[RMDB]
RNA sequence: GGGAACGACUCGAGUAGAGUCGAAAAGCUAGGCAUUUCGAUGCCUAGCGAGCGCAGAGUCUAUGCAUCUCUGAAUCACACAACAGCCGUGUGUAUGCGUGGGAGUAUCCCUCUUCGGAGGGAUAAAAUCGUGCUAAAGGUUCGCCUUUAGCACGAUAAAAGAAACAACAACAACAAC
Reactivity to 2A3 in 0.01 (KOAc 150mM, MgCl2 10mM, bicine 150mM(pH8.5), 24C), signal-to-noise 2, nucleotides 027 to 126: g000c000u000a000g020g000c000a030u070u010u090c230g100a010u020g000c000c010u000a010g000c000g010a000g000c090g010c020a020g000a020g070u000c040u090a140u120g040c030a090u040c020u010c000u070g080a090a090u110c010a010c000a020c000a170a090c030a080g120c070c080g020u000g000u000g010u030a070u040g040c040g010u030g030g010g010a060g030u010a000u000c000c000c010u020c000u020u020c150g130g000a010g000g010g010a000u010a000a000a010
Reactivity to DMS in 0.01 (KOAc 150mM, MgCl2 10mM, bicine 150mM(pH8.5), 24C), signal-to-noise 3, nucleotides 027 to 126: g000c000u000a010g010g020c000a000u000u000u010c170g010a020u000g020c000c000u010a000g020c000g000a040g010c140g020c020a030g000a080g000u010c110u000a060u000g020c100a080u010c010u000c030u000g000a110a100u000c030a020c010a010c030a080a130c150a090g010c130c080g000u000g010u000g010u010a030u000g000c080g020u000g010g000g010a130g010u000a020u000c000c000c000u000c010u000u010c210g030g000a010g000g010g000a010u000a000a030a090
Chemical mapping of a 177-nucleotide RNA with 2A3 and DMS. Source: RMDB library M2PK50, as collected in RNAgym.